[RMDB]
Conditions: 150 mM KOAc, 10 mM MgCl2 and 150 mM bicine (pH 8.5), 24 C. An RNA of 207 nucleotides, treated with 2A3 and read out base by base. The data come from the RNA Mapping Database (RMDB), library ARCHII. Values cover nucleotides 27 to 156.
RNA sequence: GGGAACGACUCGAGUAGAGUCGAAAAGCUGAACGAUGAGCACCGCCCGGUGGGGCGAGACGGACGCGAAUCUCCUCUCUGGAGGGAGAGGGGAUAUCGCGUCAACCGGAGGAAUCGGCCAGGUCCGGAAGGGAGCAACCGUGUCCGGCCGUCCGCGCAGUUUUAACAGCUUCGGCUGUUAAAACUGAAAAGAAACAACAACAACAAC
Reactivity to 2A3 in 0.01 (KOAc 150mM, MgCl2 10mM, bicine 150mM(pH8.5), 24C), signal-to-noise 1, nucleotides 027 to 156: g030c020u040g020a090a020c030g090a210u170g060a000g020c000a030c050c020g050c040c030c020g040g090u180g030g040g010g020c020g020a040g030a030c080g030g020a000c000g010c000g000a000a010u000c010u000c000c000u000c000u000c020u060g130g140a110g070g140g010a000g020a000g000g000g000g000a000u000a020u000c000g010c000g000u000c000a000a010c010c010g020g040a020g030g090a100a090u140c010g000g010c010c010a100g020g000u000c010c000g010g120a020a050g150g000g010a070g030c050a030a080c000c000g040u060g020u040c000c000g000g020c000c000g010u010c000c000g000c010g000